[RMDB]
RNA sequence: GGGAACGACUCGAGUAGAGUCGAAAAGAUAUGGAACGCAGUAGUCGAUUCAUAAGGGAGAUCUACCGGUCGGAAACGACCGAUGAUCUUUGAUCUUAUGAAUCGGGAGCGAAUGCGUUCCUAAGUCGACUACAAGGUAGUUCGCUACCUUGUAGUCAAAAGAAACAACAACAACAAC
Reactivity to 2A3 in 0.01 (KOAc 150mM, MgCl2 10mM, bicine 150mM(pH8.5), 24C), signal-to-noise 4, nucleotides 027 to 126: g040a010u110a030u190g020g000a000a000c010g000c020a000g020u300a020g300u300c160g010a010u010u000c010a000u000a010a010g030g000g000a030g000a010u000c010u060a110c070c000g020g000u000c020g010g030a040a060a060c020g000a010c020c000g000a010u010g010a010u000c000u230u250u060g020a020u020c000u010u020a000u010g010a010a010u020c000g000g000g020a210g060c020g090a300a030u020g000c000g000u000u020c000c000u000a000a000g010u000c040
Reactivity to DMS in 0.01 (KOAc 150mM, MgCl2 10mM, bicine 150mM(pH8.5), 24C), signal-to-noise 3, nucleotides 027 to 126: g000a070u010a300u000g000g000a020a020c000g000c000a040g010u020a300g030u000c030g010a000u000u000c000a010u010a010a010g010g000g000a000g010a010u000c000u010a090c110c010g010g030u010c000g010g000a070a080a140c010g010a010c000c000g020a020u000g000a010u000c000u010u000u010g010a030u010c010u000u000a000u000g000a020a000u000c000g000g010g040a180g000c000g000a130a270u000g000c000g000u000u000c000c000u000a010a070g010u000c050